[RMDB]
RNA sequence: GGGAACGACUCGAGUAGAGUCGAAAAGAUAUGGAAGCUCGGUCGGGAGGGAUGAGAUACGAAGAACUCUCUCGGAAACGAGAGAGGGAGUAUUAACAUCCCGAAGAACGACCGAGCUUCCUAAGUCCUAGGACUUACCGUUCGCGGUAAGUCCUAGAAAAGAAACAACAACAACAAC
Reactivity to DMS in 0.01 (KOAc 150mM, MgCl2 10mM, bicine 150mM(pH8.5), 24C), signal-to-noise 1, nucleotides 027 to 126: g060a100u050a250u000g020g010a020a070g010c000u010c000g020g060u000c000g000g000g000a130g020g030g020a020u020g020a300g010a020u020a020c000g020a100a140g010a240a220c030u000c010u020c000u000c010g000g000a120a080a180c000g050a000g020a000g010a010g000g040g010a040g020u020a020u000u020a110a260c010a010u000c000c000c000g040a030a210g020a120a230c000g000a020c000c000g000a010g010c000u020u000c000c000u010a040a080g010u020c030